[RMDB]
An RNA of 207 nucleotides, treated with DMS and 2A3 and read out base by base. The DMS profile rests on 2,191 reads. DMS adducts were read by reverse transcription with MarathonRT.
RNA sequence: GGGAACGACUCGAGUAGAGUCGAAAAUCUGGCUACACAACCGGUGCUACUGCGGCAGCUAUGUUCCCACCGUGGUCAGCAGCUGCCGGUGUGCCAUUUAGUUUAAGUGUUCAAUAUAGAAUUAAUGGUUUAGGUGUCACUAUGAAUGUGCUUAGUGGAUUUUUAUCCGUUUCGACGGAUAAAAAUCAAAAGAAACAACAACAACAAC
Reactivity to DMS in 0.01 (KOAc 150mM, MgCl2 10mM, bicine 150mM(pH8.5), 24C), signal-to-noise 1, nucleotides 027 to 156: u010c030u010g000g020c000u000a000c020a060c020a070a120c090c030g030g000u000g000c010u000a020c010u000g010c010g060g040c040a020g010c060u000a130u000g000u000u010c000c020c030a270c110c060g060u030g040g000u000c030a080g070c010a120g010c010u020g070c050c010g040g010u020g000u000g020c050c000a020u010u010u010a050g010u000u000u010a120a150g010u000g010u000u000c200a060a130u010a180u000a190g000a060a050u000u000a050a050u010g010g010u000u000u000a080g000g030u000g000u000c070a100c040u000a120u030g010a090a190u010g020u000g000c020u010u000a150g000u000g020
Reactivity to 2A3 in 0.01 (KOAc 150mM, MgCl2 10mM, bicine 150mM(pH8.5), 24C), signal-to-noise 3, nucleotides 027 to 156: u000c010u020g030g000c000u070a020c030a000c000a070a140c060c060g010g000u060g030c000u040a040c010u100g070c000g040g000c010a000g020c020u080a050u150g010u090u180c000c000c000a030c060c080g050u110g010g010u020c010a010g000c050a010g000c050u030g010c000c000g000g000u060g020u000g000c000c000a020u020u050u050a030g020u010u030u110a110a080g010u070g050u150u020c070a110a020u140a030u030a220g050a050a020u090u050a020a050u080g020g050u020u050u110a020g030g000u000g010u040c020a000c040u070a100u190g120a130a050u090g030u040g030c040u000u050a030g000u080g050